Source: RMDB library M2PK50, as collected in RNAgym.
Chemical mapping of a 177-nucleotide RNA with 2A3 and DMS.
DMS adducts were read by reverse transcription with MarathonRT.
RNA sequence: GGGAACGACUCGAGUAGAGUCGAAAAAUGUGGUCCUUCGGGACCACAUGGACUACUCCCACCUAAUAGAGUAGGGAGGAAGGUGGAAUAUAAAAAUAAAAAUGACCCCCCCUUUCGAGGGGGGGAAACGUACAUCUAGGUUCGCCUAGAUGUACGUAAAAGAAACAACAACAACAAC
Reactivity to 2A3 in 0.01 (KOAc 150mM, MgCl2 10mM, bicine 150mM(pH8.5), 24C), signal-to-noise 1, nucleotides 027 to 126: a010u010g020u000g000g000u000c000c000u010u010c200g020g000g000a010c020c000a000c010a000u010g000g040a000c000u070a000c010u050c060c000c000a040c000c010u190a290a280u090a200g160a010g040u150a250g020g020g020a010g080g080a010a030g130g040u180g030g030a240a060u200a030u210a280a100a040a000a030u220a140a080a070a000a050u100g080a030c000c040c000c010c000c000c000u030u000u030c190g030a020g000g000g000g000g000g000g010a010a000
Reactivity to DMS in 0.01 (KOAc 150mM, MgCl2 10mM, bicine 150mM(pH8.5), 24C), signal-to-noise 2, nucleotides 027 to 126: a010u000g000u000g000g000u000c000c010u000u020c210g040g030g020a010c000c000a000c000a020u000g000g000a090c040u000a100c090u010c000c000c000a020c040c030u000a120a110u010a100g020a080g050u000a110g040g000g000a020g000g000a040a030g010g050u010g010g000a150a050u000a090u010a010a040a030a070a090u030a020a050a050a070a130u040g000a240c010c010c000c000c000c000c010u010u000u000c120g010a020g010g000g000g010g010g000g000a000a020